[RMDB]
This 177-nucleotide RNA was probed chemically with DMS and 2A3. The data come from the RNA Mapping Database (RMDB), library OK1LIB. Conditions: 150 mM KOAc, 10 mM MgCl2 and 150 mM bicine (pH 8.5), 24 C.
RNA sequence: GGGAACGACUCGAGUAGAGUCGAAAAUCUUAUAUAGCAGCGUUUAUGAAUUUGUAAGUUGCAACCGCACGUGUGCUGUAGCCAUGUAGAGUCAUAUGUGGAUUCUUCCAAACAUAUCCAGCAUAUGGCAGUAUCGUCAUUUCGAUGACGAUACUGCAAAAGAAACAACAACAACAAC
Reactivity to DMS in 0.01 (KOAc 150mM, MgCl2 10mM, bicine 150mM(pH8.5), 24C), signal-to-noise 1, nucleotides 027 to 126: u000c050u010u000a070u000a110u020a040g020c000a070g000c100g020u010u030u000a040u070g030a010a110u010u040u000g020u000a180a100g030u060u040g050c000a040a020c220c050g000c130a040c000g000u000g000u050g000c070u000g000u020a000g000c110c030a000u010g010u020a040g000a060g000u040c000a010u000a010u000g000u000g000g020a060u020u000c260u070u030c190c240a060a140a140c140a030u050a060u020c020c000a030g030c020a000u000a000u000g010
Reactivity to 2A3 in 0.01 (KOAc 150mM, MgCl2 10mM, bicine 150mM(pH8.5), 24C), signal-to-noise 2, nucleotides 027 to 126: u000c000u140u150a110u000a060u040a060g000c000a000g040c010g090u070u170u080a210u110g180a180a170u110u110u090g100u070a200a270g020u070u110g020c030a030a050c020c120g000c000a000c030g020u090g000u000g000c040u010g050u120a080g020c050c080a170u140g040u160a000g040a000g080u040c000a020u120a030u030g020u010g000g000a020u010u000c000u190u100c080c010a050a200a070c020a120u160a000u200c000c000a000g050c020a200u000a030u040g030